Structure probing data (DMS and 2A3) for a 177-nucleotide construct.
[RMDB]
RNA sequence: GGGAACGACUCGAGUAGAGUCGAAAAUAAUUCACCUUCGUCUUCUGCUGGGGCACGGCAGAGAUCUGCUUCUUUACAUAGAAGAAAAAACAAUGCUUCUGUAGGAUUUUCAAAUGGGUCUGUGUCAUAUGAGUAUGAGGUUCGCCUCAUACUCAUAAAAAGAAACAACAACAACAAC
Reactivity to DMS in 0.01 (KOAc 150mM, MgCl2 10mM, bicine 150mM(pH8.5), 24C), signal-to-noise 2, nucleotides 027 to 126: u020a060a210u000u000c040a110c040c020u000u000c040g000u000c040u000u000c020u000g010c020u010g000g000g000g000c060a050c050g000g000c010a020g000a080g000a020u010c150u000g010c040u000u000c000u000u000u000a140c130a160u000a020g010a030a030g030a000a020a120a050a110a130c110a120a080u010g000c020u000u000c030u010g000u010a040g010g000a050u010u000u010u030c110a020a100a050u000g010g000g000u000c040u010g030u000g010u000c050a120
Reactivity to 2A3 in 0.01 (KOAc 150mM, MgCl2 10mM, bicine 150mM(pH8.5), 24C), signal-to-noise 1, nucleotides 027 to 126: u140a000a060u020u070c050a120c090c000u050u150c020g040u020c000u190u010c030u060g050c020u040g000g020g130g000c040a060c030g000g000c010a000g000a020g010a080u020c030u140g080c000u100u000c000u020u200u130a060c030a050u270a050g000a000a040g000a030a150a030a010a030a000c080a120a060u090g000c000u040u000c010u000g070u000a030g090g010a050u040u000u120u260c070a150a190a130u140g040g010g000u040c000u020g060u000g010u050c010a000

Conditions: 150 mM KOAc, 10 mM MgCl2 and 150 mM bicine (pH 8.5), 24 C. Reactivities are given for positions 27 through 126. For 2A3, 731 sequencing reads were counted.